[RMDB]
RNA sequence: GGGAACGACUCGAGUAGAGUCGAAAAUCAAGCGGAACGUGAAGUUCACCCUCGACUACCUGGCCAACUGCUGGGAUGGGAACACCUACAUCUACCAGAUAGGAGAUGGCGGGAACGAUCACAGCUGGACACCGAAUUGGUUCGCCAAUUCGGUGUCAAAAGAAACAACAACAACAAC
Reactivity to 2A3 in 0.01 (KOAc 150mM, MgCl2 10mM, bicine 150mM(pH8.5), 24C), signal-to-noise 1, nucleotides 027 to 126: u070c010a000a070g060c030g080g000a030a130c060g020u040g100a090a000g010u000u000c010a120c020c000c000u010c010g090a070c000u050a070c000c020u030g000g070c040c030a080a030c150u050g000c040u000g000g040g000a010u030g090g000g000a090a070c020a030c040c000u080a040c030a010u000c020u080a240c050c020a120g040a210u120a140g040g000a040g000a000u120g010g060c160g060g060g000a010a030c010g030a030u010c010a030c000a010g000c020u060g140
Reactivity to DMS in 0.01 (KOAc 150mM, MgCl2 10mM, bicine 150mM(pH8.5), 24C), signal-to-noise 1, nucleotides 027 to 126: u040c030a060a060g040c080g000g110a020a090c100g000u000g000a160a150g000u000u010c000a140c030c020c020u000c030g010a210c020u020a060c010c020u000g010g000c020c100a130a240c200u000g010c140u000g000g000g030a070u000g010g030g040a050a150c100a070c040c000u000a190c010a010u000c010u000a150c000c000a070g000a070u010a040g000g000a080g000a000u020g000g000c160g000g020g000a020a030c010g010a050u010c010a020c000a070g010c030u000g000